An RNA of 177 nucleotides, treated with 2A3 and read out base by base. For 2A3, 723 sequencing reads were counted. Values cover nucleotides 27 to 126. It was measured as part of the RMDB library OK1LIB.
[RMDB]
RNA sequence: GGGAACGACUCGAGUAGAGUCGAAAAGCGUAGUGACCGCGUCUGCUUCCGACAACGCGUUGGUAGUCGCGUCGUCGGAAAAGGGGGCGGUCCGCGUCUAUGACCGACCGAUCGACGUGGUCGUGUGGCGCGAUACAACGUUCGCGUUGUAUCGCGCAAAAGAAACAACAACAACAAC
Reactivity to 2A3 in 0.01 (KOAc 150mM, MgCl2 10mM, bicine 150mM(pH8.5), 24C), signal-to-noise 2, nucleotides 027 to 126: g000c020g140u210a050g050u260g130a010c010c000g070c010g300u000c010u010g050c010u000u000c000c000g000a000c000a030a000c000g000c000g020u080u140g250g070u230a020g160u050c000g040c000g000u020c000g040u000c000g010g020a000a070a000a000g020g000g010g010g000c000g000g000u010c000c000g000c010g000u020c010u030a090u050g070a000c010c000g030a010c000c000g020a050u100c020g030a070c110g130u190g000g010u000c000g000u100g050u070g080